[RMDB]
RNA sequence: GGGAACGACUCGAGUAGAGUCGAAAAAACGUUGCUUGAUCGUAAAACAUGCCCGGCUUACCGUGAGCCGCCUUUGAAAGAAAGGUUUACACGGACUCUGUUGCGUUACGCACGUACCUAACUUGUGAAAACGGCAUCUUGUUCGCAAGAUGCCGAAUCUAGUUCCUAGGUUCGCCUAGGAACUAGAAAAAGAAACAACAACAACAAC
Reactivity to DMS in 0.01 (KOAc 150mM, MgCl2 10mM, bicine 150mM(pH8.5), 24C), signal-to-noise 1, nucleotides 027 to 156: a050a020c010g000u020u000g010c020u000u000g000a080u000c050g000u000a050a060a090a060c090a070u000g010c000c030c000g020g000c030u000u010a090c040c050g060u010g000a060g020c020c020g010c030c000u000u030u010g000a170a100a190g020a050a030a040g000g010u010u000u000a150c060a080c030g060g000a170c120u010c070u020g000u000u000g020c030g030u000u000a150c100g000c040a070c050g010u000a060c050c020u000a040a060c070u010u010g000u020g000a130a050a070a170c000g020g020c000a000u000c000u000u000g040u000u010c280g030c000a000a000g000a000u000g010c000c000g000a000a010
Reactivity to 2A3 in 0.01 (KOAc 150mM, MgCl2 10mM, bicine 150mM(pH8.5), 24C), signal-to-noise 3, nucleotides 027 to 156: a000a010c020g000u020u010g000c010u030u020g020a070u190c020g040u160a080a060a020a040c020a040u070g020c010c000c000g000g010c000u030u090a090c010c000g000u000g010a000g000c000c010g010c000c000u030u020u020g120a130a070a010g070a010a010a000g030g000u000u040u060a050c010a000c000g030g020a070c040u100c060u110g100u140u030g020c030g010u020u040a080c170g000c020a010c010g020u040a040c000c000u060a140a160c040u150u060g080u060g200a050a070a030a020c010g010g000c000a000u020c000u000u000g020u050u090c120g010c100a000a000g000a000u010g000c000c000g010a000a000